[RMDB]
RNA sequence: GGGAACGACUCGAGUAGAGUCGAAAAGUCGCACAGAUAGCAUGCCAAGCGCUGCUUGUAAAACAGCAACAAAAAUAACUGUAAACAACACAGAUUACGCUCCAGCUUACGCUAAAGCUGCGUGAGUUAAUCUCCUUUUGGAGCUGGACUGAUUAGAGCUAUAACGAUAGUUCGCUAUCGUUAUAGCAAAAGAAACAACAACAACAAC
Reactivity to DMS in 0.01 (KOAc 150mM, MgCl2 10mM, bicine 150mM(pH8.5), 24C), signal-to-noise 3, nucleotides 027 to 156: g030u000c050g020c020a100c080a100g010a090u000a060g020c050a070u010g040c040c020a090a140g040c060g030c000u000g020c010u020u000g010u010a080a070a080a210c060a030g030c000a120a300c070a030a080a040a120a170u000a060a070c030u000g030u000a110a120a140c050a040a060c050a110c030a040g000a140u000u000a090c080g000c020u010c000c000a120g000c020u000u000a020c030g050c030u000a060a090a090g030c140u000g030c020g010u000g000a020g030u010u000a010a050u010c010u000c070c110u000u000u000u030g010g020a010g020c020u000g000g000a160c050u010g000a150u000u000a110g000a270
Reactivity to 2A3 in 0.01 (KOAc 150mM, MgCl2 10mM, bicine 150mM(pH8.5), 24C), signal-to-noise 9, nucleotides 027 to 156: g090u070c040g000c060a050c010a050g100a100u100a030g030c050a050u120g010c040c010a110a050g020c040g000c050u030g000c000u040u070g110u120a060a070a030a020c020a030g050c030a020a050c050a060a170a030a020a030u170a060a050c030u040g050u130a060a110a070c040a060a020c030a030c010a060g040a070u060u130a040c070g010c030u000c000c000a000g000c000u010u010a000c010g010c020u080a190a130a120g100c130u070g000c030g000u000g000a000g000u020u050a050a060u040c060u100c050c010u100u130u080u140g000g000a000g000c000u020g000g040a020c020u040g020a090u100u140a060g010a020
Chemical mapping of a 207-nucleotide RNA with DMS and 2A3. Source: RMDB library RSTRND, as collected in RNAgym. High DMS reactivity at an A or C suggests that its Watson-Crick edge is free. The reactions ran in a buffer of 150 mM KOAc, 10 mM MgCl2 and 150 mM bicine (pH 8.5), at 24 C. 2A3 adducts were read by reverse transcription with SuperScript II with manganese. The 2A3 profile rests on 9,710 reads.